Structure probing data (2A3 and DMS) for a 177-nucleotide construct. For DMS, 41,601 sequencing reads were counted. The reactions ran in a buffer of 150 mM KOAc, 10 mM MgCl2 and 150 mM bicine (pH 8.5), at 24 C. Values cover nucleotides 27 to 126.

RNA sequence: GGGAACGACUCGAGUAGAGUCGAAAAUCAAGAGUACAAAUUGGAACUUUGAUUGUGCUCGGAGUAAAUCAAAGUCGAUAAAAUCGAAGACAUCUUACUCAUCUGUCAUGUCUUCAAAUUGACAGAAGAUAGUUUGCUCAUUCGUGAGUGAACUAUCAAAAGAAACAACAACAACAAC
Reactivity to 2A3 in 0.01 (KOAc 150mM, MgCl2 10mM, bicine 150mM(pH8.5), 24C), signal-to-noise 9, nucleotides 027 to 126: u100c030a050a040g010a010g030u030a020c030a020a100a030u130u140g130g030a190a070c060u040u050u090g050a040u010u030g050u020g020c010u010c020g000g000a030g020u070a020a040a030u090c110a110a030a020g050u020c010g020a010u140a150a160a020a050u120c080g030a040a010g050a020c020a040u020c040u040u040a040c030u020c060a170u020c030u020g020u020c010a020u020g040u030c050u140u070c140a050a080a060u050u030g010a010c010a010g030a040a000
Reactivity to DMS in 0.01 (KOAc 150mM, MgCl2 10mM, bicine 150mM(pH8.5), 24C), signal-to-noise 9, nucleotides 027 to 126: u020c060a070a060g010a030g010u000a030c050a040a050a130u030u020g010g020a110a110c130u020u010u000g010a050u000u000g010u000g010c000u000c030g000g020a070g010u020a030a040a030u010c100a060a100a080g000u010c010g010a050u020a070a050a060a300u020c060g010a030a040g010a040c100a060u010c100u010u010a040c040u010c060a130u010c040u000g000u010c050a010u000g000u010c110u030u030c170a040a050a050u010u000g000a020c010a030g000a080a100